[RMDB]
RNA sequence: GGGAACGACUCGAGUAGAGUCGAAAAAUCCAUUGCAUGGAGAAGAUCGGCGAUAGGUUGCGUAGCUUCUGGAUCAUCAAUUGCAGACAUCGCCUUAAAGGCAGAACCGCGAAUAAUAGGCACAUCGUCAGGAAAUGUGUUUCGACACAUUUCCUGAAAAAGAAACAACAACAACAAC
Reactivity to DMS in 0.01 (KOAc 150mM, MgCl2 10mM, bicine 150mM(pH8.5), 24C), signal-to-noise 2, nucleotides 027 to 126: a150u000c000c000a120u030u000g000c080a300u010g020g010a110g000a050a060g030a080u000c020g000g000c060g000a100u020a060g000g000u020u000g020c050g000u010a070g000c040u000u000c030u000g000g010a080u000c060a090u030c100a040a140u010u000g000c030a070g010a090c140a080u000c040g030c020c010u000u000a050a140a120g010g000c010a210g000a080a040c080c090g010c050g020a050a050u010a070a020u030a050g000g010c040a070c140a040u000c170g000
Reactivity to 2A3 in 0.01 (KOAc 150mM, MgCl2 10mM, bicine 150mM(pH8.5), 24C), signal-to-noise 2, nucleotides 027 to 126: a000u010c010c000a030u020u090g030c000a000u120g000g080a080g010a090a030g070a130u060c030g070g000c020g070a030u040a140g130g050u050u110g050c030g020u040a050g020c000u090u010c010u020g080g000a060u090c000a000u010c000a050a190u050u070g000c000a000g020a010c050a090u090c030g020c030c010u050u080a150a070a010g050g000c000a000g080a080a040c050c050g010c010g070a040a000u170a100a060u100a060g010g000c030a020c010a060u120c050g090

Structure probing data (DMS and 2A3) for a 177-nucleotide construct.
The RNA was probed in 150 mM KOAc, 10 mM MgCl2 and 150 mM bicine (pH 8.5) at 24 C.
For 2A3, 1,344 sequencing reads were counted.